[RMDB]
RNA sequence: GGGAACGACUCGAGUAGAGUCGAAAAGAAAAUAAGCGAAGAUAGCUCAGUCGGUAGAGCAGCAGGACCGAAAGCUGCAUCGAAAGGGAUCAAGACCCUGUUCGCGCAAAAACCGAAGUUAAAAAAACAUUAGUCUCAGUUUCGACUGAGACUAAUGAAAAGAAACAACAACAACAAC
Reactivity to 2A3 in 0.01 (KOAc 150mM, MgCl2 10mM, bicine 150mM(pH8.5), 24C), signal-to-noise 1, nucleotides 027 to 126: g010a000a140a020a080u260a050a000g000c020g000a080a010g040a140u110a050g000c010u030c070a030g040u030c000g020g000u010a010g070a020g040c020a000g010c030a030g100g190a190c050c130g030a040a040a000g000c000u020g010c020a050u020c020g050a010a080a030g050g010g000a020u120c090a080a080g110a160c000c010c010u050g210u040u110c020g000c020g000c030a000a100a000a000a000c050c000g040a030a020g010u130u130a020a230a040a020a040a020a020
Reactivity to DMS in 0.01 (KOAc 150mM, MgCl2 10mM, bicine 150mM(pH8.5), 24C), signal-to-noise 2, nucleotides 027 to 126: g010a150a040a060a100u040a060a120g000c070g000a120a070g010a100u020a100g000c060u000c070a080g000u010c030g000g000u000a060g010a090g020c000a050g000c010a030g000g030a110c180c060g000a070a070a060g010c050u000g010c010a080u000c010g000a040a070a010g000g000g000a040u020c240a080a120g010a130c010c000c000u000g000u000u000c010g010c220g000c150a040a050a070a090a050c040c010g000a040a110g020u010u000a000a000a100a060a060a070a070